[RMDB]
RNA sequence: GGGAACGACUCGAGUAGAGUCGAAAAGGCUGUUGAAAUACAUUCCUGUGCCGGCAAUACAGUGUGUAUGGAGGUCUCAAUGGCUCGGAAGUGCCAGCAAACCGGCGUAAAUAUUAGCAGACGUAUGAUAGGAUGCAUCCGUUCGCGGAUGCAUCAAGAUUAUAGAGCGGUUCGCCGCUCUAUAAUCAAAAGAAACAACAACAACAAC
Reactivity to DMS in 0.01 (KOAc 150mM, MgCl2 10mM, bicine 150mM(pH8.5), 24C), signal-to-noise 1, nucleotides 027 to 156: g000g050c000u010g060u000u010g020a030a110a030u010a060c020a130u000u000c300c040u010g000u010g020c000c000g000g060c030a060a040u000a050c000a040g000u010g030u010g000u000a050u020g030g010a130g010g020u010c030u010c060a080a070u000g020g000c000u000c020g050g000a090a150g020u020g060c040c000a060g010c080a030a130a020c020c030g010g010c020g020u000a020a070a090u000a110u000u000a070g020c020a090g000a050c020g020u000a070u020g000a090u000a200g020g000a050u000g000c020a000u000c000c000g040u010u000c300g000c060g000g000a030u000g000c000a000u030c000a010a070
Reactivity to 2A3 in 0.01 (KOAc 150mM, MgCl2 10mM, bicine 150mM(pH8.5), 24C), signal-to-noise 2, nucleotides 027 to 156: g010g000c020u010g070u300u000g060a040a000a000u030a000c010a010u050u110c020c040u020g010u010g030c010c010g030g000c050a120a050u120a160c010a010g040u010g000u000g000u030a010u050g030g000a010g000g050u020c010u000c050a080a070u080g000g000c010u020c070g040g070a070a070g020u020g000c020c000a010g040c000a020a080a140c020c000g040g000c000g010u040a010a170a100u180a080u180u130a000g050c010a000g020a110c060g130u210a080u110g170a110u040a040g180g000a000u000g000c000a000u000c000c000g000u010u060c140g010c000g060g000a000u000g000c000a000u000c000a000a000
Structure probing data (DMS and 2A3) for a 207-nucleotide construct. Reactivities are rounded to 0.1 and cut off at 0 and 3. The reactions ran in a buffer of 150 mM KOAc, 10 mM MgCl2 and 150 mM bicine (pH 8.5), at 24 C. Source: RMDB library M2RFPK, as collected in RNAgym. The DMS profile rests on 1,815 reads.